[RMDB]
RNA sequence: GGGAACGACUCGAGUAGAGUCGAAAAACGUACCACCACUGGCCGUUGUUCCACUAACAUCCAACCGUGGUUCUCAGCAGCAGCAAUCCGCAGGUUUUCCUCCGUUAGGUUUGCACGCUCCAGUGGAGCGAUACUGGACGUUCGCGUCCAGUAUCGCAAAAGAAACAACAACAACAAC
Reactivity to DMS in 0.01 (KOAc 150mM, MgCl2 10mM, bicine 150mM(pH8.5), 24C), signal-to-noise 4, nucleotides 027 to 126: a070c130g020u000a120c060c040a200c030c030a050c030u000g020g020c300c030g000u010u010g010u000u000c040c010a050c040u010a110a120c130a060u010c160c110a070a080c160c180g000u020g010g010u000u000c020u000c050a080g010c070a040g030c060a100g000c050a030a050u000c040c010g000c160a130g010g000u010u010u000u030c070c050u010c050c030g010u000u000a210g010g000u000u000u010g040c050a080c080g030c050u000c020c040a030g030u000g010g010a130
Reactivity to 2A3 in 0.01 (KOAc 150mM, MgCl2 10mM, bicine 150mM(pH8.5), 24C), signal-to-noise 2, nucleotides 027 to 126: a010c040g030u040a010c000c030a010c010c010a010c020u000g010g000c090c030g050u080u110g040u070u000c010c000a010c010u020a050a020c020a160u080c060c010a050a050c040c050g020u010g070g000u090u000c050u000c020a090g030c000a010g000c010a010g010c010a020a020u030c020c020g000c080a090g010g060u040u070u130u090c020c030u080c000c030g030u060u110a030g020g020u000u030u040g000c010a040c050g010c020u000c000c000a020g010u020g020g020a060

The record gives the reactivity of an RNA of 177 nucleotides to DMS and 2A3. Values cover nucleotides 27 to 126. The data come from the RNA Mapping Database (RMDB), library OK2TST. For DMS the reverse transcriptase was MarathonRT. The 2A3 profile rests on 3,330 reads. The reactions ran in a buffer of 150 mM KOAc, 10 mM MgCl2 and 150 mM bicine (pH 8.5), at 24 C. 2A3 adducts were read by reverse transcription with SuperScript II with manganese.